This 207-nucleotide RNA was probed chemically with DMS and 2A3. The data come from the RNA Mapping Database (RMDB), library RNAMAK. For DMS the reverse transcriptase was MarathonRT. The RNA was probed in 150 mM KOAc, 10 mM MgCl2 and 150 mM bicine (pH 8.5) at 24 C. The 2A3 profile rests on 1,910 reads. For DMS, 2,296 sequencing reads were counted. Values cover nucleotides 27 to 156. 2A3 adducts were read by reverse transcription with SuperScript II with manganese.
[RMDB]
RNA sequence: GGGAACGACUCGAGUAGAGUCGAAAACAGUGGGUUCGCCCACUGAAAAAAGCGUACUACCGAGAGGCCAUGGGAGCAUGUUUCCCAAAUAGGAAACCAUGCUUUGAUCAUGGCUCCCCACCUCGGUAUCGCAAAAACCGGCAGUUCGCUGCCGGAACAUUGAUUCGGGAUUCGUCCCGAAUCAAUGAAAAGAAACAACAACAACAAC
Reactivity to DMS in 0.01 (KOAc 150mM, MgCl2 10mM, bicine 150mM(pH8.5), 24C), signal-to-noise 1, nucleotides 027 to 156: c010a020g020u020g000g070g070u000u000c300g030c000c000c020a040c000u030g010a000a060a100a050a090a220g020c020g010u000a050c060u000a000c000c020g010a040g050a300g030g050c010c000a050u010g000g000g020a020g060c050a010u000g020u000u000u000c000c020c000a020a070a170u010a030g000g000a020a000a000c150c120a030u000g010c030u000u000u020g000a110u000c000a030u010g030g010c000u010c240c070c000c070a300c080c000u000c040g000g020u000a000u020c010g030c010a030a090a070a130a060c000c000g030g000c000a060g000u000u000c300g010c000u010g030c000c010g000g010a010a020
Reactivity to 2A3 in 0.01 (KOAc 150mM, MgCl2 10mM, bicine 150mM(pH8.5), 24C), signal-to-noise 2, nucleotides 027 to 156: c010a000g000u010g010g030g020u070u070c150g150c000c000c010a020c010u010g000a070a000a000a010a000a000g040c020g020u070a070c030u000a000c000c010g000a000g000a010g020g030c000c000a000u010g020g030g000a010g000c000a000u000g000u000u000u000c010c000c000a140a170a090u220a020g000g020a000a010a030c120c070a000u000g000c000u080u120u050g080a080u110c000a000u000g000g000c010u020c010c000c000c000a040c010c010u000c000g000g000u020a080u260c020g000c000a030a070a060a060a060c020c000g000g000c000a000g010u040u260c180g010c110u000g000c000c010g000g000a000a010